Structure probing data (DMS and 2A3) for a 177-nucleotide construct. It was measured as part of the RMDB library M2PK90.
[RMDB]
RNA sequence: GGGAACGACUCGAGUAGAGUCGAAAAUAAAAUCGUAGGGCGAGACGAUCGACGUAAAUCGCUCAAACUACUCGAGACCAAAGGAAUACGCUUCGGUAACUCGCUCUAAUCCGGAGCGAUAAAUGAAUCUUAGUAUUAUCUUCGGAUAAUACUAAGAAAAAGAAACAACAACAACAAC
Reactivity to DMS in 0.01 (KOAc 150mM, MgCl2 10mM, bicine 150mM(pH8.5), 24C), signal-to-noise 5, nucleotides 027 to 126: u020a110a080a120a170u000c000g020u000a090g010g010g020c020g010a020g010a040c020g020a040u010c010g020a040c070g020u000a030a080a060u020c130g010c130u000c160a050a090a130c010u000a000c010u000c020g010a020g010a160c030c040a080a090a080g010g000a110a090u000a070c030g000c010u000u000c000g010g000u010a220a100c030u000c010g000c000u000c000u000a160a100u010c020c010g000g000a000g000c000g000a030u000a020a060a080u010g000a070a110
Reactivity to 2A3 in 0.01 (KOAc 150mM, MgCl2 10mM, bicine 150mM(pH8.5), 24C), signal-to-noise 4, nucleotides 027 to 126: u050a000a060a010a010u020c000g000u000a020g000g010g010c000g000a000g010a020c010g020a050u060c020g020a020c020g020u050a030a040a090u120c060g030c070u040c060a030a040a020c010u000a000c000u000c000g030a020g020a070c030c000a080a060a020g140g060a210a090u130a160c010g000c000u000u000c000g000g010u000a020a020c000u000c000g000c010u000c010u000a030a050u030c010c010g000g000a000g010c000g000a000u030a000a070a020u140g060a040a050
For 2A3 the reverse transcriptase was SuperScript II with manganese.